RNA sequence: GGGAACGACUCGAGUAGAGUCGAAAAGACGCCUGUGUGGCGAAGCGAGCAUGGGAAAGAGCCGCACAGUCCAUCUCAUAUAAAGCGGCCAGAUGGAUUGCUCGCUAAAAGAUCCAUAUCACUGAGAGGACUGGGAUAUAUUCGUAUAUCCCAGUCCAAAAGAAACAACAACAACAAC
Reactivity to DMS in 0.01 (KOAc 150mM, MgCl2 10mM, bicine 150mM(pH8.5), 24C), signal-to-noise 2, nucleotides 027 to 126: g010a110c110g010c000c000u000g030u040g000u020g000g010c000g000a090a080g020c000g010a030g020c010a050u010g070g000g000a190a120a160g000a040g040c000c010g030c020a040c170a090g010u010c110c060a070u000c010u030c110a130u060a060u030a090a140a140g010c000g010g000c050c040a040g000a120u010g000g000a050u000u010g010c000u010c040g030c020u010a000a010a080a160g000a000u000c030c000a080u050a010u010c040a030c080u010g000a010g020a300
Reactivity to 2A3 in 0.01 (KOAc 150mM, MgCl2 10mM, bicine 150mM(pH8.5), 24C), signal-to-noise 3, nucleotides 027 to 126: g100a000c020g020c000c050u060g080u100g020u110g110g000c020g020a000a020g000c010g000a010g000c000a050u110g100g030g030a070a150a030g090a060g000c000c010g040c030a060c050a010g000u040c080c000a070u030c030u010c050a040u120a060u050a240a110a040g040c010g030g030c090c000a040g030a060u080g000g030a010u000u050g000c000u000c000g000c000u020a000a010a010a000g070a010u000c010c020a000u050a020u200c050a060c120u100g030a090g050a050